Record summary: This 207-nucleotide RNA was probed chemically with DMS and 2A3. For 2A3, 1,410 sequencing reads were counted. Conditions: 150 mM KOAc, 10 mM MgCl2 and 150 mM bicine (pH 8.5), 24 C. It was measured as part of the RMDB library OK3TST.
RNA sequence: GGGAACGACUCGAGUAGAGUCGAAAAGCAUCUGGAAGAACUGCAUGAAGCCGUUGUCCGAGAGGCCGAUGUGUUUUAGGUCGCGAGCGUCGUAGCGGGGAAAGUCACGGAUGGAGAUGGAAUUGAUGCUUUCUAGGAUCUCCGCGACCAGCUGCGGUACGGGAUGGAGAUUCGUCUCCAUCCCGUAAAAAGAAACAACAACAACAAC
Reactivity to DMS in 0.01 (KOAc 150mM, MgCl2 10mM, bicine 150mM(pH8.5), 24C), signal-to-noise 2, nucleotides 027 to 156: g010c020a040u000c030u000g020g010a150a090g010a090a080c060u010g010c010a110u000g000a070a110g030c000c030g000u000u000g010u000c010c040g030a130g000a090g020g010c010c030g000a090u020g030u000g010u000u010u010u000a110g000g000u000c010g000c020g010a130g000c080g020u000c030g040u000a100g000c010g020g010g010g000a060a040a110g000u000c070a080c030g020g020a020u010g010g010a080g020a130u010g030g000a090a170u000u000g020a080u010g020c040u000u000u000c070u010a140g020g000a110u000c030u000c000c020g000c050g000a070c010c020a090g030c040u030g050c050g010g000
Reactivity to 2A3 in 0.01 (KOAc 150mM, MgCl2 10mM, bicine 150mM(pH8.5), 24C), signal-to-noise 2, nucleotides 027 to 156: g000c000a020u010c020u090g030g040a070a010g000a050a030c050u050g000c010a080u130g040a040a010g010c000c000g040u080u130g040u020c040c010g060a090g000a020g200g020c010c010g100a170u110g170u030g070u000u010u040u130a050g010g020u010c020g000c010g010a020g000c020g010u030c020g060u050a020g000c010g010g010g010g040a020a090a040g030u070c060a020c080g030g000a010u030g020g010a030g000a000u100g060g050a040a050u070u070g030a020u060g060c000u050u070u010c020u070a060g000g170a030u030c020u020c000c000g000c000g010a050c030c050a030g030c050u120g010c000g000g000